RNA sequence: GGGAACGACUCGAGUAGAGUCGAAAAUUGAAGGUAAAACAGCGUGUGGGUGAAACACACCCACAGGGCCCAUUGGGCGCUAGCACUCUGGUAUCACGGUACCUUUGUGCGCCUGUUUUACCGAAGGGCGCUCAUCACUUCGGUGAUGAGAAAAGAAACAACAACAACAAC
Reactivity to DMS in 0.01 (KOAc 150mM, MgCl2 10mM, bicine 150mM(pH8.5), 24C), signal-to-noise 9, nucleotides 027 to 129: u040u040g000a180a120g000g040u000a000a010a010a010c010a020g010c010g060u020g020u000g020g030g020u030g020a140a140a120c260a200c020a000c020c000c010a020c000a020g010g000g020c000c000c020a040u040u040g010g010g010c000g020c020u050a060g040c010a020c010u000c000u000g000g010u000a000u000c050a120c300g040g010u000a000c000c010u000u000u000g000u020g000c000g000c010c000u010g000u010u010u010u010a000c000c020g010a070a050g010g010g000c160g010
Reactivity to 2A3 in 0.01 (KOAc 150mM, MgCl2 10mM, bicine 150mM(pH8.5), 24C), signal-to-noise 9, nucleotides 027 to 129: u130u130g060a070a010g000g000u000a000a000a000a000c000a000g010c050g090u010g000u000g010g010g000u000g030a030a070a010c120a010c010a000c030c000c000a000c000a000g000g000g000c000c010c020a040u270u300g000g000g000c020g010c090u100a040g010c000a000c000u000c000u000g000g000u000a000u030c030a050c220g130g010u000a000c000c000u000u000u000g000u000g000c000g000c000c000u000g000u000u010u000u010a000c000c000g000a000a000g030g030g030c070g000